[RMDB]
RNA sequence: GGGAACGACUCGAGUAGAGUCGAAAAGAGCUAAUAUCUUGAGGCAUCGUGCAUACGUUCAAGUUGACUAUACCGUACGUAAAGGUGUCUGAAAGAUGCUUCUAGGUAGUCGAAUGAACGGCUCGAAGGGUUAAGAAUUCUUCGGAAUUCUUAACCCAAAAGAAACAACAACAACAAC
Reactivity to DMS in 0.01 (KOAc 150mM, MgCl2 10mM, bicine 150mM(pH8.5), 24C), signal-to-noise 3, nucleotides 027 to 126: g000a020g000c000u000a070a090u020a030u000c010u000u000g010a010g000g000c010a020u000c010g000u020g000c090a040u000a300c000g000u000u000c150a090a090g000u080u010g020a090c100u040a090u000a080c030c020g000u020a050c110g020u000a040a090a140g010g040u000g010u000c000u010g010a060a050a040g000a000u000g030c000u010u000c020u000a010g000g030u010a020g000u010c100g000a180a150u020g010a080a100c080g010g010c010u000c010g000a080a040
Reactivity to 2A3 in 0.01 (KOAc 150mM, MgCl2 10mM, bicine 150mM(pH8.5), 24C), signal-to-noise 2, nucleotides 027 to 126: g010a000g010c000u000a000a080u020a160u130c020u010u010g040a040g030g010c020a010u000c010g030u050g030c030a070u010a040c010g040u000u070c060a110a050g000u010u010g070a100c030u020a050u050a060c010c000g060u030a020c020g020u010a020a130a060g080g000u030g000u010c000u020g100a060a070a000g000a000u010g010c020u020u010c040u080a040g000g000u050a020g010u020c010g020a010a000u090g000a080a040c000g000g000c000u020c000g030a090a020
Record summary
The record gives the reactivity of an RNA of 177 nucleotides to DMS and 2A3. High DMS reactivity at an A or C suggests that its Watson-Crick edge is free. For DMS the reverse transcriptase was MarathonRT. 2A3 adducts were read by reverse transcription with SuperScript II with manganese. Conditions: 150 mM KOAc, 10 mM MgCl2 and 150 mM bicine (pH 8.5), 24 C.